[RMDB]
RNA sequence: GGGAACGACUCGAGUAGAGUCGAAAAAGGGACCUAGUAGUUAAGCAAUUUGGUUCUGUGUGGAAAAAUCCCCCCUUAAUGUUUAGACUCUCCCCUCCUUCUAUGAGCUAUUAAAAAGUCACAAGCCCAUCUGCAAGGGAUUCGUCCCUUGCAGAUGAAAAGAAACAACAACAACAAC
Reactivity to DMS in 0.01 (KOAc 150mM, MgCl2 10mM, bicine 150mM(pH8.5), 24C), signal-to-noise 1, nucleotides 027 to 126: a080g020g010g010a030c020c010u000a060g020u010a120g000u000u000a060a190g010c170a080a090u000u020u000g000g000u000u010c030u000g010u000g030u000g020g010a030a080a090a080a170u000c040c000c010c020c010c020u000u000a040a080u000g020u000u000u000a090g010a110c000u000c030u000c020c000c000c030u000c010c030u000u000c080u000a090u000g000a120g000c000u000a040u010u010a040a050a110a130a120g010u000c040a030c100a100a180g020c040c070
Conditions: 150 mM KOAc, 10 mM MgCl2 and 150 mM bicine (pH 8.5), 24 C.
Structure probing data (DMS) for a 177-nucleotide construct.
Reactivities are given for positions 27 through 126.
The DMS profile rests on 972 reads.